[RMDB]
RNA sequence: GGGAACGACUCGAGUAGAGUCGAAAAAACGCUUUUAAAUUCAUCCAUAGCGAUGUGUUCUGGCAAACAAUUAAACGGUUUAAUUCGUAAUGAAUUAGCCGCUUUAGUUCUAAUACGACUUACAGUAGUUCCUUACUCUUUUCGAAGAGUAAGGAACAAAAGAAACAACAACAACAAC
Reactivity to 2A3 in 0.01 (KOAc 150mM, MgCl2 10mM, bicine 150mM(pH8.5), 24C), signal-to-noise 2, nucleotides 027 to 126: a010a010c090g000c040u100u100u050u140a090a110a140u240u060c000a010u000c000c060a220u150a110g080c130g070a000u020g030u000g030u090u030c070u050g060g000c030a080a070a060c010a010a150u110u050a060a020a000c010g010g010u090u270u300a010a010u000u000c000g080u110a150a190u250g000a010a000u000u000a000g020c000c000g000c000u030u000u010a010g020u020u020c000u010a000a000u010a020c000g010a000c000u010u010a000c010a020g040u080a020
Reactivity to DMS in 0.01 (KOAc 150mM, MgCl2 10mM, bicine 150mM(pH8.5), 24C), signal-to-noise 2, nucleotides 027 to 126: a080a100c210g010c050u000u000u000u000a080a050a060u020u000c000a030u000c020c000a260u010a180g020c120g010a010u000g020u000g000u000u000c100u010g010g020c030a140a100a070c180a080a010u000u000a010a010a000c010g010g000u000u000u000a000a000u000u000c000g000u000a140a060u030g000a020a030u000u000a000g010c010c000g000c060u000u000u000a040g000u000u000c010u000a000a010u000a010c030g010a010c010u000u000a000c040a300g020u010a080